The record gives the reactivity of an RNA of 177 nucleotides to 2A3. Reactivities are given for positions 27 through 126. The data come from the RNA Mapping Database (RMDB), library OK1LIB. High 2A3 reactivity points to a flexible backbone, as in loops and unpaired stretches.
RNA sequence: GGGAACGACUCGAGUAGAGUCGAAAAUGAUAUAAUCUGCAUCCGACAACGAUCACCAACUUCCACCUUGAUCGAUUGGUCGCAUAAUCCAUUAAAUUUGGAAGUAGUCGCUCAUGCUUAAAAAUACCCAGGCAGCACGAUUCGUCGUGCUGCCUGGAAAAGAAACAACAACAACAAC
Reactivity to 2A3 in 0.01 (KOAc 150mM, MgCl2 10mM, bicine 150mM(pH8.5), 24C), signal-to-noise 1, nucleotides 027 to 126: u020g100a050u090a050u100a300a060u010c080u140g000c000a000u020c240c000g010a000c000a000a080c000g060a110u000c000a050c030c000a120a000c000u090u000c000c000a110c000c000u060u060g000a070u010c050g030a060u010u030g000g150u000c000g000c010a090u240a050a000u000c000c010a000u130u000a090a090a080u090u200u080g000g000a000a000g000u220a000g090u090c000g070c000u010c000a070u130g030c000u110u240a090a000a000a000a000u040a000c000